[RMDB]
Background: Structure probing data (DMS) for a 177-nucleotide construct. Conditions: 150 mM KOAc, 10 mM MgCl2 and 150 mM bicine (pH 8.5), 24 C. Source: RMDB library TTRDEL, as collected in RNAgym. Values cover nucleotides 27 to 126. For DMS the reverse transcriptase was MarathonRT.

RNA sequence: GGGAACGACUCGAGUAGAGUCGAAAAGAUAUGGACCCAGUAGCUAGCCUACGCGAGUCGGAAACGACUCAGGCUUGGACCUACGGGUCCUAAGUCAAAUCCAGCCCUUCUUCGGAAGGGCUGGAAAGAAGCUACUAGUGUUCGCACUAGUAGCUUCAAAAGAAACAACAACAACAAC
Reactivity to DMS in 0.01 (KOAc 150mM, MgCl2 10mM, bicine 150mM(pH8.5), 24C), signal-to-noise 1, nucleotides 027 to 126: g000a040u000a300u010g000g000a010c020c000c010a130g040u000a090g000c040u000a030g010c000c000u000a210c220g020c270g000a010g000u010c000g010g000a030a140a240c000g000a000c000u000c010a060g010g020c000u000u010g050g010a000c290c010u000a030c040g030g000g010u000c000c000u020a000a020g010u010c030a080a080a130u000c000c000a000g000c000c000c000u000u000c010u000u010c210g010g010a010a000g000g010g000c000u000g000g000a000a020a070